An RNA of 177 nucleotides, treated with DMS and 2A3 and read out base by base. DMS adducts were read by reverse transcription with MarathonRT. For 2A3, 6,641 sequencing reads were counted.
RNA sequence: GGGAACGACUCGAGUAGAGUCGAAAAGAUAUGGAGUUGUUUCUUUUGACGCUCAAACGGUCGGAAACGACCGGUAGAGCGAUAAGAAACACCUCCUAAGUCAAAGCCCCAGGUUCGCCUGGGGCAACAUAAGAAAGAAGUUCGCUUCUUUCUUAUGAAAAGAAACAACAACAACAAC
Reactivity to DMS in 0.01 (KOAc 150mM, MgCl2 10mM, bicine 150mM(pH8.5), 24C), signal-to-noise 1, nucleotides 027 to 126: g000a010u000a300u000g010g000a050g020u000u000g000u000u010u000c000u000u060u010u030g030a110c100g030c000u010c000a020a160a300c040g010g000u000c020g010g000a070a050a220c000g020a020c010c000g010g000u000a140g000a000g040c000g010a050u020a010a030g000a010a000a000c000a030c050c000u010c010c010u000a020a090g000u010c000a130a140a150g050c000c000c000c000a010g010g020u020u010c300g030c000c010u020g000g000g000g000c000a020a000
Reactivity to 2A3 in 0.01 (KOAc 150mM, MgCl2 10mM, bicine 150mM(pH8.5), 24C), signal-to-noise 2, nucleotides 027 to 126: g020a030u110a080u250g000g000a010g000u000u000g000u010u000u000c000u020u120u130u230g300a210c100g020c000u020c000a290a300a120c020g010g010u010c000g000g010a060a120a100c000g020a010c000c000g000g020u040a020g000a000g000c000g000a010u040a030a000g010a000a000a000c000a020c000c000u000c000c000u010a120a010g030u030c020a130a140a100g000c000c000c000c000a010g080g080u080u150c300g070c150c000u000g000g000g000g000c000a000a000